[RMDB]
RNA sequence: GGGAACGACUCGAGUAGAGUCGAAAACAGAGAUUUAAAAUUUCUCACAUACCUUCCGGGAGUUCUAGCUAAGCAUGAGCUGAGAAAGGUUUCCACUAGUGCAGAUGCUCUCUAAUGUUCAGUUACCUGCAAAAAAGGAUGCUUCUGAGCCAAUUGAGAUAUUUACCGACUUCGGUCGGUAAAUAUCAAAAGAAACAACAACAACAAC
Reactivity to 2A3 in 0.01 (KOAc 150mM, MgCl2 10mM, bicine 150mM(pH8.5), 24C), signal-to-noise 1, nucleotides 027 to 156: c040a030g040a010g060a010u110u130u300a130a170a070a160u120u160u000c040u040c010a050c010a020u130a000c000c040u050u030c100c030g000g040g000a050g060u030u040c050u150a010g000c010u000a030a020g000c040a100u060g070a020g030c000u020g010a030g120a120a080a070g060g000u000u070u000c040c000a030c020u020a030g040u040g020c040a000g000a100u030g000c000u000c000u000c020u080a130a110u120g040u090u090c000a000g000u050u070a030c070c020u010g000c000a000a000a000a300a000a000g020g010a020u050g080c010u110u000c010u040g070a020g050c030c010a170a180u300u210g040a080